[RMDB]
RNA sequence: GGGAACGACUCGAGUAGAGUCGAAAAGAGUCCUAUUUCGAUAGGACUCAACUAAAAUCAGCGGUAAAUAAUUAGCUGCCGUUACCGCUGAACGCCAGCAUACUAGCCUCGUCUUCGGACGAGGCAAGGACAGAUAUAUCUUCGGAUAUAUCUGUCCAAAAGAAACAACAACAACAAC
Reactivity to DMS in 0.01 (KOAc 150mM, MgCl2 10mM, bicine 150mM(pH8.5), 24C), signal-to-noise 3, nucleotides 027 to 126: g010a000g000u000c000c000u000a000u000u000u010c210g000a010u000a000g010g010a010c000u000c000a030a070c140u010a050a080a100a100u000c000a010g010c000g000g020u000a010a020a100u000a060a080u000u020a110g020c020u000g000c140c110g000u000u000a000c010c000g000c000u000g000a010a050c130g000c060c010a110g010c130a110u010a110c120u010a110g010c000c000u000c010g020u000c000u000u010c180g000g020a010c010g000a000g000g010c000a000a020
Reactivity to 2A3 in 0.01 (KOAc 150mM, MgCl2 10mM, bicine 150mM(pH8.5), 24C), signal-to-noise 4, nucleotides 027 to 126: g000a010g010u000c010c000u010a010u000u100u050c210g090a010u000a000g000g050a000c010u000c000a000a000c020u080a020a010a030a170u030c010a000g000c010g030g040u030a020a060a070u150a100a190u250u210a060g070c070u060g070c060c020g040u000u000a020c000c000g000c000u000g000a000a010c030g060c010c020a030g070c020a170u140a260c060u110a110g000c020c000u000c000g010u000c000u020u070c260g070g000a000c000g010a000g000g000c010a000a010
Structure probing data (DMS and 2A3) for a 177-nucleotide construct. The data come from the RNA Mapping Database (RMDB), library M2PK50. DMS adducts were read by reverse transcription with MarathonRT. The DMS profile rests on 3,464 reads. The reactions ran in a buffer of 150 mM KOAc, 10 mM MgCl2 and 150 mM bicine (pH 8.5), at 24 C.